[RMDB]
RNA sequence: GGGAACGACUCGAGUAGAGUCGAAAACGCUGGGUUUCUCGACGAUCACAGCUCCCCACCAUCCUGAAGCGCGCACGGGAUGAGGCUGUGGGAGAUGAAACCUGUGCUGAAGCGCGCACGGCAACCGAAAGGUGCGAGUACCCUUUUCGAAGGGUAACAAACAUCCAACAUUCGUGUUGGAUGUUUGAAAAGAAACAACAACAACAAC
Reactivity to DMS in 0.01 (KOAc 150mM, MgCl2 10mM, bicine 150mM(pH8.5), 24C), signal-to-noise 3, nucleotides 027 to 156: c070g040c050u010g030g000g020u010u000u000c000u010c050g020a170c130g010a190u000c030a030c020a050g030c020u010c300c010c010c030a300c060c010a020u040c000c030u000g020a020a080g030c000g010c000g020c000a300c020g010g020g030a080u020g000a180g000g020c040u010g000u000g000g000g010a230g010a080u000g010a040a040a040c010c020u000g000u000g010c040u000g010a120a050g000c010g010c000g020c000a230c010g010g040c010a130a110c020c030g020a150a170a200g030g000u000g020c030g000a150g040u000a060c010c000c000u010u000u000u010c220g020a080a060g020g010g020u000a020a150
Reactivity to 2A3 in 0.01 (KOAc 150mM, MgCl2 10mM, bicine 150mM(pH8.5), 24C), signal-to-noise 5, nucleotides 027 to 156: c080g010c030u060g000g010g000u000u040u000c020u030c020g300a300c010g000a020u010c000a000c000a010g000c010u060c060c030c000c000a020c010c000a000u000c000c000u050g050a220a040g020c010g000c000g000c000a000c010g010g000g000a000u010g010a010g020g000c000u000g000u010g010g020g000a030g000a000u150g000a000a000a000c010c000u020g060u050g000c030u110g050a140a060g000c010g010c000g000c010a000c010g040g000c040a100a150c010c010g050a120a040a030g020g010u030g020c020g000a020g040u040a030c000c000c000u010u020u020u070c150g130a030a010g010g000g000u040a000a050